An RNA of 177 nucleotides, treated with 2A3 and read out base by base. 2A3 adducts were read by reverse transcription with SuperScript II with manganese. It was measured as part of the RMDB library OK1LIB.
RNA sequence: GGGAACGACUCGAGUAGAGUCGAAAAGGUCAACCUGGAACCGGGCGUCACCAUCAACGCGGUGCCGGCCGCGUUCGCGGUGGUGCUGAUCGCGCUGUUCGUGAUGACCACGCGGCUGCACGCGGUCGAAGCUGGGCCGAUUCGUCGGCCCAGCUUCAAAAGAAACAACAACAACAAC
Reactivity to 2A3 in 0.01 (KOAc 150mM, MgCl2 10mM, bicine 150mM(pH8.5), 24C), signal-to-noise 2, nucleotides 027 to 126: g000g010u060c010a010a160c050c050u060g160g050a040a000c040c010g040g030g000c010g050u010c040a060c020c000a060u210c060a040a000c000g000c010g110g020u030g070c080c030g060g030c000c000g010c030g000u040u040c040g000c000g000g020u050g000g020u030g080c000u040g020a120u090c010g000c000g080c240u190g070u300u160c000g020u070g010a130u070g090a130c030c010a060c060g220c020g000g000c040u110g000c010a010c060g010c000g020g000u110c030